[RMDB]
RNA sequence: GGGAACGACUCGAGUAGAGUCGAAAAUGUUUCCGGAAGUGAAGAUGAUACUUUUAUUAUACACAUGUUUAGGUUUCAUGUGUACUUGCUAUUUUGGUGUCUUCUCUCUUUUGAACCUUAAGCUUAGUACCAGGAUGCUUCGGCAUCCUGAAAAGAAACAACAACAACAAC
Reactivity to DMS in 0.01 (KOAc 150mM, MgCl2 10mM, bicine 150mM(pH8.5), 24C), signal-to-noise 3, nucleotides 027 to 129: u080g040u000u010u080c020c070g010g000a070a060g000u000g030a080a030g010a040u000g020a000u010a050c050u040u000u060u020a070u000u000a240u020a060c020a040c020a020u020g010u060u050u090a120g050g020u030u030u000c010a050u040g000u020g020u010a040c180u000u070g010c180u030a110u000u000u000u000g030g020u010g050u020c070u030u020c020u000c000u020c030u020u030u050u000g010a080a090c090c020u000u000a070a070g040c060u000u000a060g010u000a110c000
Reactivity to 2A3 in 0.01 (KOAc 150mM, MgCl2 10mM, bicine 150mM(pH8.5), 24C), signal-to-noise 4, nucleotides 027 to 129: u160g000u000u020u000c000c000g030g030a050a030g040u020g040a110a030g030a020u090g020a010u000a030c000u000u020u040u070a140u060u090a070u030a030c010a000c010a000u010g050u000u120u140a180g090g060u090u100u090c000a010u010g000u010g000u020a020c000u100u090g050c050u060a130u110u110u040u090g000g000u010g000u000c000u020u000c020u000c000u000c000u030u000u030u030g050a040a040c020c000u020u080a030a000g010c010u040u060a030g010u020a090c000